[RMDB]
RNA sequence: GGGAACGACUCGAGUAGAGUCGAAAAGAUAUGGAGGUCAAUGUGAUGGGAACUACGACUGUGAUCGGAAACGAUCACUGUCGCCCAUCGAAGACCUCCUAAGUCAAACCCUGGGUUCGCCCAGGGACAUAAGAGGACGCUUCGGCGUCCUCUUAUGAAAAGAAACAACAACAACAAC
Reactivity to DMS in 0.01 (KOAc 150mM, MgCl2 10mM, bicine 150mM(pH8.5), 24C), signal-to-noise 2, nucleotides 027 to 126: g000a040u000a300u000g000g000a050g000g010u000c020a090a110u010g080u010g030a000u010g020g000g000a190a030c260u020a300c000g000a000c000u020g040u000g020a000u000c020g040g000a110a100a160c010g000a000u000c000a010c010u010g000u000c030g000c000c010c000a000u010c000g000a200a160g000a020c000c000u000c010c000u000a010a080g000u010c040a110a140a200c020c000c000u000g010g000g000u000u010c300g030c000c010c000a010g000g020g030a030
Reactivity to 2A3 in 0.01 (KOAc 150mM, MgCl2 10mM, bicine 150mM(pH8.5), 24C), signal-to-noise 1, nucleotides 027 to 126: g030a030u080a090u180g000g000a040g020g000u010c090a130a150u240g170u300g020a000u000g010g030g060a150a140c180u190a070c300g020a000c010u060g010u010g020a020u040c020g000g010a020a060a040c000g000a030u020c000a010c020u000g020u000c030g150c000c000c000a000u000c000g010a000a010g010a000c000c000u030c000c000u000a000a000g000u030c000a050a050a130c030c000c000u030g010g070g000u030u130c300g060c030c000c000a000g000g000g010a000

An RNA of 177 nucleotides, treated with DMS and 2A3 and read out base by base. Source: RMDB library TTRDES, as collected in RNAgym. The reactions ran in a buffer of 150 mM KOAc, 10 mM MgCl2 and 150 mM bicine (pH 8.5), at 24 C. Values cover nucleotides 27 to 126. The 2A3 profile rests on 1,707 reads.